[RMDB]
RNA sequence: GGGAACGACUCGAGUAGAGUCGAAAAGAUAUGGACGCUUAAUAGGUUAGCCAAUGAGCAACAGCCGUCCGUCGGAAACGACGGUACGGACAUGCUCAUUGGCUAACCUAUCCAGCGUCCUAAGUCAUCUGUAACUUAACUUCGGUUAAGUUACAGAAAAAGAAACAACAACAACAAC
Reactivity to DMS in 0.01 (KOAc 150mM, MgCl2 10mM, bicine 150mM(pH8.5), 24C), signal-to-noise 3, nucleotides 027 to 126: g010a060u000a300u000g000g010a010c000g020c000u000u000a120a020u000a010g010g010u000u010a000g020c000c000a010a000u010g000a020g000c010a030a080c300a270g020c010c000g010u010c000c010g030u000c000g000g000a140a130a240c010g010a020c000g010g020u010a010c010g000g000a030c110a150u000g000c010u000c000a000u000u000g010g000c000u000a000a000c010c010u000a010u000c040c170a040g020c000g010u000c000c000u010a000a080g020u010c040a140